Overview
This 177-nucleotide RNA was probed chemically with DMS and 2A3. DMS adducts were read by reverse transcription with MarathonRT. The data come from the RNA Mapping Database (RMDB), library OK2TRN.
RNA sequence: GGGAACGACUCGAGUAGAGUCGAAAAGCUACUCUGGAUGAUCAGGCGUUUUGCUGUUCACGGCUUAUGACCUACCUCCGCGGGAUUAGUUACAAGGUCACCGUUGGCGCCCUUGUCGCUAAUGAGGCAGUAAGCCUCCGUUCGCGGAGGCUUACUGAAAAGAAACAACAACAACAAC
Reactivity to DMS in 0.01 (KOAc 150mM, MgCl2 10mM, bicine 150mM(pH8.5), 24C), signal-to-noise 2, nucleotides 027 to 126: g020c030u000a090c100u000c070u000g010g010a140u000g000a050u010c080a080g010g030c060g020u010u000u010u010g030c020u000g020u000u010c080a090c150g010g000c060u000u000a090u010g010a130c030c010u000a110c030c000u000c020c050g010c040g010g020g000a070u000u000a020g020u000u010a030c020a020a020g020g000u000c010a020c000c030g010u030u010g030g040c030g010c110c020c010u000u000g000u000c060g010c000u000a000a030u010g000a040g000g020
Reactivity to 2A3 in 0.01 (KOAc 150mM, MgCl2 10mM, bicine 150mM(pH8.5), 24C), signal-to-noise 1, nucleotides 027 to 126: g010c030u080a050c040u010c030u150g140g000a100u050g060a060u090c030a040g100g030c040g060u060u050u160u230g000c000u040g030u070u060c040a010c090g000g000c010u020u060a070u200g090a100c000c000u030a050c000c000u050c050c010g020c080g050g030g010a020u010u010a000g020u000u010a000c000a000a010g000g010u030c040a000c000c010g250u160u210g060g010c050g020c000c000c000u000u010g010u010c040g000c020u010a000a070u100g040a040g110g000